[RMDB]
RNA sequence: GGGAACGACUCGAGUAGAGUCGAAAAGCCGAGCACUUCCUCGGCGCGGCGCAGGCGGUAGCGCAACGUGUUGACGUGAACGUGCUGCCGAGCGGCGAGUUCAUUCAGCGUGCCCCGGUGGGCGAGGCUCGACAUCGGGUUUCGACCCGAUGUCGAGAAAAGAAACAACAACAACAAC
Reactivity to DMS in 0.01 (KOAc 150mM, MgCl2 10mM, bicine 150mM(pH8.5), 24C), signal-to-noise 2, nucleotides 027 to 126: g010c000c000g000a140g000c200a160c160u060u020c110c020u000c150g000g000c000g020c080g000g000c040g040c010a140g000g010c010g000g020u010a050g000c000g000c080a090a030c110g010u000g020u020u010g000a050c040g020u000g010a090a170c090g020u000g020c020u000g000c000c030g020a080g010c010g010g000c040g010a100g010u000u000c040a110u000u000c070a180g000c050g020u000g000c030c010c020c080g010g030u020g040g010g000c040g010a140g010g000
Reactivity to 2A3 in 0.01 (KOAc 150mM, MgCl2 10mM, bicine 150mM(pH8.5), 24C), signal-to-noise 1, nucleotides 027 to 126: g040c020c010g000a010g100c150a120c220u190u160c040c020u020c000g000g030c010g000c020g000g000c000g000c000a010g050g190c010g040g020u040a020g030c020g020c010a000a060c000g100u150g090u170u300g200a050c020g000u020g030a180a030c040g000u010g030c000u000g000c000c020g030a040g000c000g060g050c040g010a000g030u000u090c020a110u180u060c020a040g040c040g050u090g010c010c000c000c000g100g060u160g000g000g000c040g020a070g010g000